[RMDB]
RNA sequence: GGGAACGACUCGAGUAGAGUCGAAAAGAUAUGGAUCCAACCCAGAGCCGCCAUCGGAAACGAUGGGCGGUAGUCUGGUUGGAUCCUAAGUCAAAAGAAGGUCGAAGGCUUCGGCCUUCGACCUUCAGUUGGUAUACGAGUUCGCUCGUAUACCAACAAAAGAAACAACAACAACAAC
Reactivity to DMS in 0.01 (KOAc 150mM, MgCl2 10mM, bicine 150mM(pH8.5), 24C), signal-to-noise 1, nucleotides 027 to 126: g010a030u010a300u010g000g010a000u000c000c010a020a020c130c080c160a050g050a120g030c010c000g010c000c000a010u000c000g020g010a120a040a100c000g010a000u000g030g020g040c000g000g000u000a000g040u010c010u000g000g000u000u000g000g000a000u000c000c000u010a000a050g010u000c010a120a150a160a180g040a040a040g020g000u000c000g000a020a010g020g010c050u000u000c250g020g000c000c000u000u000c020g000a030c000c000u010u000c000a010

An RNA of 177 nucleotides, treated with DMS and read out base by base. Values cover nucleotides 27 to 126. The data come from the RNA Mapping Database (RMDB), library TTRDES. The reactions ran in a buffer of 150 mM KOAc, 10 mM MgCl2 and 150 mM bicine (pH 8.5), at 24 C.